[RMDB]
RNA sequence: GGGAACGACUCGAGUAGAGUCGAAAAUUCUGCUAAGCCGUACAACAAUAAGGGAGAAAACCGACCUGUCUGUUUUCCUAGUAGUAACGAAACAUCCAUCGAUACAUAUAUGCAAUUCGCUAAACAAUGUUAUGAGCAUUUAAAUUCGAAAUUGUCCCCUAUCCAAUGGGUUCGCCCAUUGGAUAGGAAAAGAAACAACAACAACAAC
Reactivity to 2A3 in 0.01 (KOAc 150mM, MgCl2 10mM, bicine 150mM(pH8.5), 24C), signal-to-noise 3, nucleotides 027 to 156: u030u000c010u030g040c020u080a080a020g060c050c010g130u080a050c050a100a010c010a060a140u120a190a050g030g020g000a110g030a060a070a020a040c020c040g030a030c020c040u030g060u070c030u010g040u030u020u040u000c000c000u010a030g030u040a000g000u010a080a030c030g060a110a040a000c040a060u040c030c020a030u060c040g050a000u030a080c020a020u150a030u020a020u190g010c000a010a040u040u000c020g030c040u090a040a070a010c030a090a020u020g000u050u070a080u230g080a020g020c010a000u020u050u070a050a070a110u110u060c030g030a010a030a140u070u040g040u070c010c040
Reactivity to DMS in 0.01 (KOAc 150mM, MgCl2 10mM, bicine 150mM(pH8.5), 24C), signal-to-noise 2, nucleotides 027 to 156: u000u000c030u010g000c060u000a070a090g030c060c070g000u020a170c020a080a130c040a100a100u030a100a160g020g010g000a230g000a110a030a160a100c040c050g030a110c040c040u010g040u010c020u010g010u000u000u000u000c010c000u010a150g030u000a080g010u010a010a080c050g010a090a050a060c030a090u000c070c040a120u020c070g020a150u000a080c000a120u000a110u000a090u020g000c030a060a140u000u000c060g020c080u010a040a060a100c070a130a050u000g010u000u020a110u010g010a160g010c020a050u020u000u000a000a000a160u000u030c040g010a030a050a100u020u000g030u000c050c040
This 207-nucleotide RNA was probed chemically with 2A3 and DMS. The RNA was probed in 150 mM KOAc, 10 mM MgCl2 and 150 mM bicine (pH 8.5) at 24 C. High 2A3 reactivity points to a flexible backbone, as in loops and unpaired stretches.